This 207-nucleotide RNA was probed chemically with 2A3. 2A3 adducts were read by reverse transcription with SuperScript II with manganese. It was measured as part of the RMDB library OK3TST. The RNA was probed in 150 mM KOAc, 10 mM MgCl2 and 150 mM bicine (pH 8.5) at 24 C. The 2A3 profile rests on 343 reads.

RNA sequence: GGGAACGACUCGAGUAGAGUCGAAAAUGUGCAAUGAUGACAAGAUGGAUAGACCCCUUUGUAAUAUGUGUGGGUUAACUCCACUAUGUCCACCAAAUUACAUUAUGCCUACGGCAAAAGAUGAUAAGAAAGAUAUGGACUGCAAGGAUAUGACUGACCCCACUCGUACUUUCGAGUACGAGUGGGGAAAAGAAACAACAACAACAAC
Reactivity to 2A3 in 0.01 (KOAc 150mM, MgCl2 10mM, bicine 150mM(pH8.5), 24C), signal-to-noise 1, nucleotides 027 to 156: u090g040u030g020c000a000a090u050g020a000u010g120a000c000a000a000g130a170u180g000g000a040u050a010g000a030c000c020c040c110u000u040u120g030u300a180a170u110a150u270g100u000g000u300g010g000g010u040u040a090a090c160u150c000c000a000c030u040a190u050g060u000c080c000a020c000c000a000a000a050u090u030a030c030a070u010u010a070u040g030c000c000u060a040c050g000g000c000a000a000a000a220g030a040u110g020a000u000a150a030g010a110a000a010g020a000u020a020u220g100g000a000c000u000g020c020a070a000g040g000a060u140a020u280g140a070c160u070g020a000